[RMDB]
RNA sequence: GGGAACGACUCGAGUAGAGUCGAAAAGCAAAAAAGACUACGGUCGUAACUCUGUAGAAGAAGAAAUCAAGUUAACUGUUGACCGUGUUCCUGGCGACAAAGGUCAAGAAGCUUUAAAAGAGUCAGUUAAAAACUUCAAGCAGUUACGUUUAUGGAACAUAAAAUAUCGGUUCGCCGAUAUUUUAUGAAAAGAAACAACAACAACAAC
Reactivity to 2A3 in 0.01 (KOAc 150mM, MgCl2 10mM, bicine 150mM(pH8.5), 24C), signal-to-noise 3, nucleotides 027 to 156: g040c030a030a080a100a080a000a070g080a090c080u090a030c100g070g040u040c000g010u020a010a010c020u020c050u140g030u210a050g010a080a010g030a030a000g050a060a160a070u210c100a100a020g050u040u050a030a010c010u020g010u030u020g000a000c010c010g000u000g010u020u020c030c060u070g070g020c040g020a010c030a040a130a070g010g000u010c000a010a010g080a060a020g020c030u070u100u140a040a130a030a000g000a000g000u000c000a000g010u000u000a010a040a060a120a040c010u030u010c030a060a050g000c020a010g060u020u050a010c020g010u000u060u040a130u110g060g020a070a020
Reactivity to DMS in 0.01 (KOAc 150mM, MgCl2 10mM, bicine 150mM(pH8.5), 24C), signal-to-noise 1, nucleotides 027 to 156: g020c020a020a040a130a090a030a080g000a270c020u000a080c020g020g000u000c020g030u010a010a070c010u000c000u020g000u000a120g000a090a100g010a090a120g010a080a070a120u020c080a080a130g010u000u000a010a080c030u000g020u010u000g010a020c060c020g010u000g010u010u000c010c020u000g000g030c010g020a080c010a060a080a100g030g000u010c030a040a070g010a070a130g000c000u010u000u020a130a170a100a180g010a060g050u000c060a030g010u010u010a010a050a100a040a040c020u010u000c030a100a070g020c040a030g030u000u010a020c060g020u040u000u000a080u020g030g000a190a200

The data come from the RNA Mapping Database (RMDB), library OK3TST.
Structure probing data (2A3 and DMS) for a 207-nucleotide construct.
The RNA was probed in 150 mM KOAc, 10 mM MgCl2 and 150 mM bicine (pH 8.5) at 24 C.
2A3 adducts were read by reverse transcription with SuperScript II with manganese.
For DMS, 2,110 sequencing reads were counted.